RNA sequence: GGGAACGACUCGAGUAGAGUCGAAAACUCGAUCCACCUUCGAGGGGGUUCACACCUCCAGUCGACGGGCCGGCUAUUCUUCUUUCCCUUCUCUCGUCUUCCUCGGUCAACCUCUUGAGUUCCUCUUCUUCCUCCCUGCUGAGGCUCUUCCCUCCCGCCCCUGAUAUGAGUUCGCUCAUAUCAGGGGAAAAGAAACAACAACAACAAC
Reactivity to 2A3 in 0.01 (KOAc 150mM, MgCl2 10mM, bicine 150mM(pH8.5), 24C), signal-to-noise 1, nucleotides 027 to 156: c070u050c030g000a070u070c030c040a090c050c050u040u070c040g050a110g000g000g000g030g010u260u240c120a070c060a020c060c000u000c000c050a140g100u020c050g020a010c030g010g020g010c090c010g060g000c000u110a090u140u090c020u130u020c030u050u040u130c010c000c090u100u030c030u000c020u010c000g060u010c050u050u010c020c010u060c040g030g050u040c100a090a080c020c020u060c020u110u050g080a040g070u100u040c030c000u020c000u110u030c020u120u000c010c030u000c040c000c000u040g000c050u040g020a010g010g070c010u010c000u040u040c000c000c020u010c020c020c000g070

Structure probing data (2A3) for a 207-nucleotide construct. Source: RMDB library VIROID, as collected in RNAgym.